The data come from the RNA Mapping Database (RMDB), library OK2TRN. The record gives the reactivity of an RNA of 177 nucleotides to 2A3 and DMS. The RNA was probed in 150 mM KOAc, 10 mM MgCl2 and 150 mM bicine (pH 8.5) at 24 C. Values cover nucleotides 27 to 126.
RNA sequence: GGGAACGACUCGAGUAGAGUCGAAAACACCAGGAAACUGGCCAUUCUGCUCGGACCACUCGCGGAAGAAGUGAUGCAGUAUGUCCACAAAGGCCGGACCGGGCGCUAUGCCAUUGAGAAGAAUAACGCUGGUCAAUGAAUUCGUUCAUUGACCAGCAAAAGAAACAACAACAACAAC
Reactivity to 2A3 in 0.01 (KOAc 150mM, MgCl2 10mM, bicine 150mM(pH8.5), 24C), signal-to-noise 1, nucleotides 027 to 126: c010a030c000c020a000g120g020a080a180a110c050u020g000g000c000c000a080u100u110c010u060g040c070u050c180g010g020a020c010c020a010c020u070c100g000c030g030g020a040a050g060a090a030g080u060g030a030u080g000c010a010g010u130a090u210g040u000c010c010a030c000a020a080a000g000g000c000c010g050g010a030c000c010g030g010g000c000g010c060u180a080u300g050c000c030a030u040u230g110a250g000a160a030g070a030a040u150a140a000c030
Reactivity to DMS in 0.01 (KOAc 150mM, MgCl2 10mM, bicine 150mM(pH8.5), 24C), signal-to-noise 1, nucleotides 027 to 126: c060a190c020c010a070g000g000a100a150a170c080u000g000g000c130c060a100u000u000c090u010g000c180u000c060g110g000a060c030c290a120c070u000c110g060c030g020g020a060a060g000a180a030g000u000g000a300u020g020c020a040g000u030a100u000g010u010c020c030a160c060a020a060a170g030g000c040c020g010g020a140c000c050g010g020g000c000g000c100u000a010u000g000c020c030a120u000u000g000a180g030a120a130g020a070a070u010a030a130c140

For DMS, 581 sequencing reads were counted. As a SHAPE reagent, 2A3 marks flexible, mostly unpaired nucleotides at the ribose 2'-OH.